[RMDB]
RNA sequence: GGGAACGACUCGAGUAGAGUCGAAAAGAGAUCGGACAGCGCAGGAAACUGCGUGAAACUCGCCUGUAAUUCCGGCAUCAUCACACCAGUGAUGUGGCGACUGCCCUUGCUGCUGCGGCAGUGAUUUUAAACGAUUGCUGGUUCGCCAGCAAUCGAACCCAAAUGUCUCGUUCGCGAGACAUUUGGGAAAAGAAACAACAACAACAAC
Reactivity to 2A3 in 0.01 (KOAc 150mM, MgCl2 10mM, bicine 150mM(pH8.5), 24C), signal-to-noise 1, nucleotides 027 to 156: g080a000g010a050u060c020g010g010a020c020a070g000c000g040c010a000g020g030a070a040a040c010u000g000c000g010u030g030a060a020a030c080u040c030g010c000c010u030g080u120a040a130u030u020c020c000g020g000c010a030u130c000a000u040c000a010c050a080c030c140a050g010u010g010a010u000g020u020g020g000c000g020a030c050u070g000c060c000c010u020u130g040c040u010g000c010u040g040c050g050g050c000a000g000u010g070a070u030u100u060u300a080a170a000c020g000a000u000u000g000c000u010g000g030u020u020c070g050c020c000a000g040c000a000a000u040c000g000a030a010